[RMDB]
RNA sequence: GGGAACGACUCGAGUAGAGUCGAAAAUUUAGUCUAGUCAAAUUUGUAAGUUUUGGAAGAUGAGCGGAAUUUGAUGAAAGAGUCAUCUUUGCUAAGUAUGUAGAGGUCUUUUUUGGGCUAUUUUUGGACAGGGGUUCAAUUCCCCUCGUCUCCACCACUCUAAGAGACACUUCGGUGUCUCUUAGAGAAAAGAAACAACAACAACAAC
Reactivity to 2A3 in 0.01 (KOAc 150mM, MgCl2 10mM, bicine 150mM(pH8.5), 24C), signal-to-noise 1, nucleotides 027 to 156: u020u010u000a000g000u000c070u020a000g040u020c000a000a050a030u140u090u090g110u120a090a250g050u020u050u200u270g090g030a050a020g000a130u050g020a000g020c040g030g030a000a000u000u000u060g050a070u050g000a020a020a000g020a000g030u040c000a040u030c060u020u020u060g010c000u040a120a080g080u060a110u210g000u030a030g050a050g100g000u060c000u000u060u080u140u170u190g100g000g040c040u000a020u000u050u000u000u130g010g000a000c000a000g000g020g000g000u130u290c020a010a040u100u060c000c000c000c000u000c020g000u000c000u000c000c000a030c000c000a060
Structure probing data (2A3) for a 207-nucleotide construct. Reactivities are given for positions 27 through 156. The RNA was probed in 150 mM KOAc, 10 mM MgCl2 and 150 mM bicine (pH 8.5) at 24 C. It was measured as part of the RMDB library ARCHII.